[RMDB]
RNA sequence: GGGAACGACUCGAGUAGAGUCGAAAAAUACACUGCACGUGCGUGCGAGCAGUUUUCGAAAUAAUCGUACGUACGUAAAGAGCCAACUCUACUCGAUGCGAGGGUCAGCAAAGUCGUUCCCAUAUAAAGUACUGGAUUGAUUCGUCAAUCCAGUACUAAAAGAAACAACAACAACAAC
Reactivity to 2A3 in 0.01 (KOAc 150mM, MgCl2 10mM, bicine 150mM(pH8.5), 24C), signal-to-noise 2, nucleotides 027 to 126: a000u170a010c070a030c030u050g040c030a010c000g010u000g020c000g000u000g000c000g010a020g000c150a030g000u020u070u060u230c170g180a070a020a010u070a020a040u020c000g020u020a000c000g000u000a000c010g010u000a020a010a010g020a000g060c050c030a020a010c000u000c000u000a000c000u010c000g000a020u040g000c000g040a120g040g180g060u110c060a030g000c010a010a080a000g010u010c070g000u020u000c000c020c010a000u010a000u000a000a020
Reactivity to DMS in 0.01 (KOAc 150mM, MgCl2 10mM, bicine 150mM(pH8.5), 24C), signal-to-noise 1, nucleotides 027 to 126: a090u040a110c160a150c020u000g020c300a040c010g030u010g000c040g030u000g010c000g000a020g000c250a130g000u020u000u050u000c130g010a050a050a030u000a110a120u000c000g020u000a030c000g030u000a030c000g000u020a060a130a090g010a090g010c180c040a010a010c000u000c000u000a000c000u000c000g000a130u030g010c000g000a140g020g000g000u010c120a220g010c000a110a250a030g000u010c000g000u000u000c000c000c030a000u000a020u000a080a090